[RMDB]
RNA sequence: GGGAACGACUCGAGUAGAGUCGAAAAGAUAUGGAUGUUCUCCCCACCUACAGCUAAGACAGUCUCUCGGAAACGAGAGAUCGAGCUGGGAGGAACAUCCUAAGUCAAACGCAGGUUCGCCUGCGAACCAUCUCCUUCGCUUCGGCGAAGGAGAUGGAAAAGAAACAACAACAACAAC
Reactivity to 2A3 in 0.01 (KOAc 150mM, MgCl2 10mM, bicine 150mM(pH8.5), 24C), signal-to-noise 2, nucleotides 027 to 126: g020a010u060a030u110g000g010a020u000g000u030u000c020u080c010c040c020c030a210c010c060u300a300c080a040g000c000u220a240a000g010a010c000a010g020u040c000u010c000u000c010g000g030a020a000a010c010g000a000g060a010g020a020u010c000g000a000g020c060u130g070g000g000a040g010g070a000a030c010a000u000c000c010u000a000a000g020u000c020a050a080a110c000g000c000a000g010g120u090u230c290g180c110c000u010g000c020g010a020a020
Reactivity to DMS in 0.01 (KOAc 150mM, MgCl2 10mM, bicine 150mM(pH8.5), 24C), signal-to-noise 2, nucleotides 027 to 126: g020a020u000a040u000g020g010a010u000g010u000u010c000u000c000c000c050c210a300c300c190u020a160c140a030g030c060u000a190a080g000a050c300a020g000u000c000u000c000u000c020g050g000a010a000a020c020g020a020g000a010g010a000u000c020g000a020g040c050u010g040g000g050a020g000g010a000a000c000a010u000c000c000u000a000a050g000u000c020a080a160a150c010g020c050a010g020g000u010u000c170g000c000c010u010g020c000g010a020a130